[RMDB]
RNA sequence: GGGAACGACUCGAGUAGAGUCGAAAAUUUUGGCUUUGUCGAAAGGACACGAAAUCGAUCCACCGCGGGGCGCGCAGUGGACUUGUUACUUAUUUAACUGACUCCUAAACGAGAAAGCUCCCCUGCGGCCCAUACGGAUAUUCGUAUCCGUAUGGGCAAAAGAAACAACAACAACAAC
Reactivity to 2A3 in 0.01 (KOAc 150mM, MgCl2 10mM, bicine 150mM(pH8.5), 24C), signal-to-noise 1, nucleotides 027 to 126: u080u080u050u110g010g000c020u010u050u020g140u070c030g060a140a080a090g060g010a010c020a020c100g010a050a010a090u120c060g060a180u000c000c000a000c010c000g010c020g020g010g140g060c190g000c010g000c100a000g010u010g000g070a020c030u020u060g000u050u000a050c050u060u120a060u180u260u000a060a030c000u030g070a020c010u040c030c020u050a180a120a100c000g000a000g080a050a000a010g000c010u020c010c000c000c000u120g000c040g110
Reactivity to DMS in 0.01 (KOAc 150mM, MgCl2 10mM, bicine 150mM(pH8.5), 24C), signal-to-noise 1, nucleotides 027 to 126: u010u000u000u010g010g000c020u000u000u000g000u010c000g000a140a230a080g000g020a020c080a020c120g010a070a130a100u000c090g000a140u000c010c010a060c050c010g000c010g000g000g000g000c230g000c020g010c030a050g030u000g020g000a020c070u010u000g000u000u000a040c280u000u000a130u000u030u000a100a080c060u000g000a070c250u000c030c000u000a040a160a140c040g010a010g010a010a110a140g000c060u000c060c010c020c050u010g020c050g070
The record gives the reactivity of an RNA of 177 nucleotides to 2A3 and DMS. The data come from the RNA Mapping Database (RMDB), library OK2TST. The RNA was probed in 150 mM KOAc, 10 mM MgCl2 and 150 mM bicine (pH 8.5) at 24 C. For 2A3, 1,036 sequencing reads were counted.